[RMDB]
RNA sequence: GGGAACGACUCGAGUAGAGUCGAAAAAAAAAGUUUGGUUAUCAUUGAUUGUAAGUGAUAACUGUCCUUCCUUAGAGACAAUCAAGAGGAUUGUUAAAUACACUUCAGCAAUGUUCACUGGAAACGGCAGGCCAAUUAGCUGUUCUCUAAAUCAAGCCCGAUCUCACUAUUUCGAUAGUGAGAUCGGAAAAGAAACAACAACAACAAC
Reactivity to 2A3 in 0.01 (KOAc 150mM, MgCl2 10mM, bicine 150mM(pH8.5), 24C), signal-to-noise 2, nucleotides 027 to 156: a000a000a000a000a000g070u020u080u030g010g000u010u010a030u030c010a000u010u030g120a180u160u120g090u290a000a000g000u020g030a070u010a000a000c000u000g020u020c000c020u010u110c020c000u090u130a090g000a000g010a130c100a090a210u080c000a050a030g000a010g060g030a030u000u030g000u000u030a040a160a040u160a060c000a000c000u060u050c020a000g000c020a010a050u010g040u060u060c080a030c100u030g040g080a090a100a020c010g000g010c000a020g080g070c060c010a140a190u200u060a070g010c000u000g040u030u000c030u000c020u040a060a070a110u090c060a060a000g080c010